[RMDB]
RNA sequence: GGGAACGACUCGAGUAGAGUCGAAAAGGACGCGCUGUCGCGUCCGAAUUAACGACAGCAACUAGCCUGUCACCAACCAGGCGAAUUAUGUUGGUGGAAUGAGGCGAAAGCCUCUAUCAGACUGGGACAUAGCAGUCGAAUUAACUAUGUCAUUAGACCACCUAAAUAUGUUCGCAUAUUUAGGUGGAAAAGAAACAACAACAACAAC
Reactivity to DMS in 0.01 (KOAc 150mM, MgCl2 10mM, bicine 150mM(pH8.5), 24C), signal-to-noise 2, nucleotides 027 to 156: g000g020a040c010g020c010g000c030u010g000u000c010g030c030g040u010c030c010g010a030a030u000u000a080a070c020g020a040c030a010g020c110a160a130c080u010a240g020c000c000u010g000u000c020a090c080c040a100a090c080c040a090g010g000c020g030a120a080u010u050a080u010g000u010u000g020g010u000g030g000a130a090u010g010a040g020g000c000g000a120a110a260g020c000c000u000c000u000a060u030c080a110g000a180c010u000g000g010g010a050c030a030u000a020g010c000a110g020u000c010g030a120a150u000u000a040a040c020u000a010u000g000u000c000a220u000u000a100g010a300
Reactivity to 2A3 in 0.01 (KOAc 150mM, MgCl2 10mM, bicine 150mM(pH8.5), 24C), signal-to-noise 5, nucleotides 027 to 156: g000g000a000c000g020c010g010c010u010g000u020c000g000c000g010u000c010c010g010a000a010u120u050a080a040c010g000a000c010a000g000c010a030a050c110u110a050g010c010c000u000g020u030c010a000c000c000a000a000c000c000a000g000g000c060g050a060a070u290u150a090u130g000u000u000g020g010u010g020g030a060a070u120g000a000g000g000c010g030a030a050a000g000c000c000u000c000u020a090u090c010a010g010a010c010u010g010g010g000a000c010a000u010a000g010c000a000g010u030c120g030a040a030u140u040a070a060c000u000a000u010g000u030c010a000u020u110a020g040a040